[RMDB]
RNA sequence: GGGAACGACUCGAGUAGAGUCGAAAACGCGUGUGAAUAAGAUUAUUGAGAACCAGCUUCGUAUCGCACCAACUCAAUAUAUGUGGUUCCACCGUCGCUUUAAAACACGUCCAGAGGGAUAUGAAGAUAAAAUACGUAGUUUCGACUACGUAUUUUAAAAAGAAACAACAACAACAAC
Reactivity to 2A3 in 0.01 (KOAc 150mM, MgCl2 10mM, bicine 150mM(pH8.5), 24C), signal-to-noise 7, nucleotides 027 to 126: c030g020c030g000u030g010u040g050a070a080u120a110a040g050a100u090u080a030u070u160g040a070g030a070a040c030c020a050g040c020u050u050c040g050u050a040u060c040g010c090a080c030c020a050a090c020u030c040a050a010u050a010u020a040u140g100u050g060g040u080u050c040c010a020c000c020g120u110c050g030c030u080u060u080a040a120a010a010c040a010c020g030u020c030c000a070g050a060g130g120g000a020u030a030u120g030a040a020g040a080
Reactivity to DMS in 0.01 (KOAc 150mM, MgCl2 10mM, bicine 150mM(pH8.5), 24C), signal-to-noise 9, nucleotides 027 to 126: c170g020c090g030u010g010u000g010a080a060u010a080a080g000a100u000u000a030u000u000g010a050g010a130a130c130c110a130g000c020u000u000c070g010u000a040u010c060g020c100a120c120c100a070a190c020u000c020a020a030u000a030u000a060u010g020u000g010g010u000u000c050c030a040c060c050g010u000c080g010c050u000u000u010a060a080a090a080c090a030c040g000u000c030c040a130g000a100g010g000g000a060u000a030u010g010a050a070g000a200